This 307-nucleotide RNA was probed chemically with DMS and 2A3. For DMS, 26,634 sequencing reads were counted. The reactions ran in a buffer of 150 mM KOAc, 10 mM MgCl2 and 150 mM bicine (pH 8.5), at 24 C. For 2A3 the reverse transcriptase was SuperScript II with manganese.
RNA sequence: GGGAACGACUCGAGUAGAGUCGAAAAGGUAUCCGUACGCGGAUACCAAAGACUAUACUUUCAGGGAUCAUUUCUAUAGUGUGUUACUAGAGAAGUUUCUCUGAACGUGUAGAGCACCGAAAACCACGAGGAAGAGAGGUAGCGUUUUCUCCUGAGCGUGAAGCCGGCUUUCUGGCGUUGCUUGGCUGCAACUGCCGUCAGCCAUUGAUGAUCGUUCUUCUCUCCGUAUUGGGGAGUGAGAGGGAGAGAACGCGGUCUGAGUGGUUAACGGUAGCUUCGGCUACCGUAAAAGAAACAACAACAACAAC
Reactivity to DMS in 0.01 (KOAc 150mM, MgCl2 10mM, bicine 150mM(pH8.5), 24C), signal-to-noise 6, nucleotides 027 to 266: g000g000u000a000u000c000c010g030u000a090c210g040c010g010g000a000u000a000c000c000a020a070a100g010a090c000u000a010u000a000c000u000u000u000c010a010g010g000g010a010u010c160a020u010u000u000c000u000a070u000a010g010u010g020u020g020u030u030a020c000u000a010g000a020g000a020a010g010u000u000u000c000u000c000u000g000a010a010c040g000u000g010u000a000g000a090g010c100a240c010c010g000a110a100a070a030c010c010a010c000g000a300g000g000a030a100g000a160g010a130g020g020u010a160g010c000g010u000u000u000u000c020u000c000c000u000g000a040g010c000g000u000g010a220a160g010c090c300g000g010c020u000u000u000c000u020g060g010c010g000u000u000g000c010u000u010g020g010c140u000g000c010a010a010c010u010g070c000c010g010u000c040a010g010c000c010a060u010u010g000a050u000g000a170u000c010g020u000u000c010u000u000c000u000c000u000c000c010g010u020a100u020u030g020g000g000g000a010g000u000g000a050g030a140g000g000g000a010g000a020g000a010a010c020g010c000g000g010u000c000u000g000a300g010u000g000g000u000u000a030
Reactivity to 2A3 in 0.01 (KOAc 150mM, MgCl2 10mM, bicine 150mM(pH8.5), 24C), signal-to-noise 3, nucleotides 027 to 266: g000g000u000a000u010c000c000g000u010a020c250g010c000g050g000a000u000a000c000c000a000a000a000g010a000c000u000a000u010a020c000u000u000u000c010a000g010g010g000a020u030c020a020u050u030u000c010u000a030u000a010g000u020g020u020g050u130u210a020c000u000a000g000a000g000a030a000g010u000u030u000c010u000c000u000g000a000a000c000g000u000g000u000a000g010a000g020c040a070c020c010g030a090a020a000a010c000c000a000c010g010a000g040g010a030a020g130a030g020a020g170g110u090a020g020c010g000u000u000u000u000c000u000c000c010u030g030a010g000c000g000u010g020a010a010g040c040c060g000g000c000u020u020u010c060u160g010g000c000g000u000u010g000c000u060u120g160g080c140u040g000c010a010a010c040u160g000c000c000g000u000c000a000g000c000c000a010u030u160g060a040u010g000a000u020c000g000u020u010c000u040u000c000u000c000u000c000c000g020u070a170u090u300g000g000g020g000a000g000u130g030a130g010a050g020g000g000a000g000a000g010a000a000c000g000c000g010g000u000c000u000g010a000g000u000g000g000u000u010a010